[RMDB]
RNA sequence: GGGAACGACUCGAGUAGAGUCGAAAAGGCCGGCUAGACGGACGGGCGGUUCAGCCGAGGCGGUCGCUGCUCAUCGCCAAGGGCCGGCCCGCGGGCUGGGUUUCGCUGGGUACGGUCGGGGUCCGGGUCACACAGACCAGUUCGCUGGUCUGUGUGAAAAAGAAACAACAACAACAAC
Reactivity to DMS in 0.01 (KOAc 150mM, MgCl2 10mM, bicine 150mM(pH8.5), 24C), signal-to-noise 2, nucleotides 027 to 126: g010g030c000c040g000g000c080u020a070g000a100c020g000g010a110c080g020g000g040c000g020g000u000u020c110a150g000c060c030g020a160g000g020c040g020g000u000c090g010c070u010g000c090u000c050a050u010c120g000c070c090a100a120g010g000g000c000c020g000g030c030c000c020g000c040g010g000g000c040u040g020g000g020u010u050u000c010g050c040u010g040g000g000u000a040c030g060g000u000c080g010g000g000g040u020c000c030g030g020g000
Reactivity to 2A3 in 0.01 (KOAc 150mM, MgCl2 10mM, bicine 150mM(pH8.5), 24C), signal-to-noise 2, nucleotides 027 to 126: g010g020c020c000g000g020c030u100a050g030a120c080g100g000a020c010g030g020g020c000g050g000u060u080c070a040g010c010c010g040a100g050g110c050g010g030u050c050g000c040u020g010c010u040c060a160u060c060g050c040c000a020a120g020g010g010c000c000g020g020c000c000c000g080c000g010g020g000c040u200g060g110g000u060u110u130c050g000c050u090g090g000g000u020a050c020g010g040u040c000g020g010g000g000u000c000c000g010g000g030